Structure probing data (2A3 and DMS) for a 207-nucleotide construct. 2A3 adducts were read by reverse transcription with SuperScript II with manganese. For DMS the reverse transcriptase was MarathonRT. As a SHAPE reagent, 2A3 marks flexible, mostly unpaired nucleotides at the ribose 2'-OH. The DMS profile rests on 2,128 reads. Conditions: 150 mM KOAc, 10 mM MgCl2 and 150 mM bicine (pH 8.5), 24 C. Source: RMDB library RNAMAK, as collected in RNAgym. Values cover nucleotides 27 to 156. The 2A3 profile rests on 2,910 reads.

RNA sequence: GGGAACGACUCGAGUAGAGUCGAAAACGCUGGGUGACCUCUUCGAGCCACUGGGAGCUGAAGCGCGCACGGCAUCGAUCAGUGGGCUCGAAUGUCACCUGUGCUGAAGCGCGCACGGCAACCGAAAGGUGCGAUUCCCCAACUUUCGAGUUGGGAAACAACGUGAACAAUUCGUUGUUCACGUUGUAAAAGAAACAACAACAACAAC
Reactivity to 2A3 in 0.01 (KOAc 150mM, MgCl2 10mM, bicine 150mM(pH8.5), 24C), signal-to-noise 2, nucleotides 027 to 156: c030g000c020u020g000g000g010u000g000a000c000c010u020c000u020u000c000g000a010g010c000c010a020c000u050g040g080g080a060g000c010u000g010a170a020g020c010g000c010g000c010a010c040g010g010c020a190u300c110g110a100u130c030a030g020u030g040g210g030c000u010c000g000a000a010u050g000u000c000a000c000c010u000g000u010g000c010u040g020a110a040g020c010g000c000g000c020a010c030g000g040c010a030a020c010c000g050a090a050a010g040g000u030g000c000g020a040u090u130c020c010c000c000a010a000c010u080u120u170c260g100a040g030u000u010g010g010g080a030a110
Reactivity to DMS in 0.01 (KOAc 150mM, MgCl2 10mM, bicine 150mM(pH8.5), 24C), signal-to-noise 1, nucleotides 027 to 156: c040g040c020u000g010g000g000u000g000a030c010c110u010c180u000u000c050g010a030g020c000c040a080c010u000g000g000g000a100g010c060u000g030a100a060g070c030g010c010g020c020a300c070g050g010c000a200u010c130g000a120u010c080a060g020u000g080g020g030c070u000c000g000a030a020u040g000u010c010a040c000c020u010g020u000g000c050u000g010a130a010g020c060g060c000g060c010a300c080g040g010c000a060a190c010c000g040a120a090a130g000g020u010g000c000g000a290u010u020c010c010c020c030a020a030c000u000u010u040c180g000a100g030u010u030g000g000g020a000a030